[RMDB]
RNA sequence: GGGAACGACUCGAGUAGAGUCGAAAAAGGUUGCCUAAGGAGGGGUGAACCGGCGCAGGUCGGAAACGGAGCAGGUCAAAACUCCCGUGCUGAUCAGUAGUGGGAUCGCGCCUGUGAAUAGCCACUGCACUCCAGCCUGGGCAACAUAGCGAGACCCGUGUAUAUGUGACUUCGGUCACAUAUACACAAAAGAAACAACAACAACAAC
Reactivity to 2A3 in 0.01 (KOAc 150mM, MgCl2 10mM, bicine 150mM(pH8.5), 24C), signal-to-noise 2, nucleotides 027 to 156: a020g060g000u030u000g000c030c000u080a030a020g010g030a010g000g010g030g000u020g010a020a030c040c000g010g000c010g000c050a090g070g020u100c030g020g070a140a170a030c070g020g020a060g040c110a030g000g080u130c030a010a040a000a300c030u010c000c000c000g010u050g050c020u080g010a120u090c090a010g060u040a030g070u060g020g040g020a110u140c030g000c000g020c030c000u010g010u000g070a120a110u110a070g000c010c000a050c050u090g020c010a010c000u000c010c000a020g000c010c000u010g000g000g040c010a000a000c000a000u030a000g080c070g050a080g030a110c000c000c010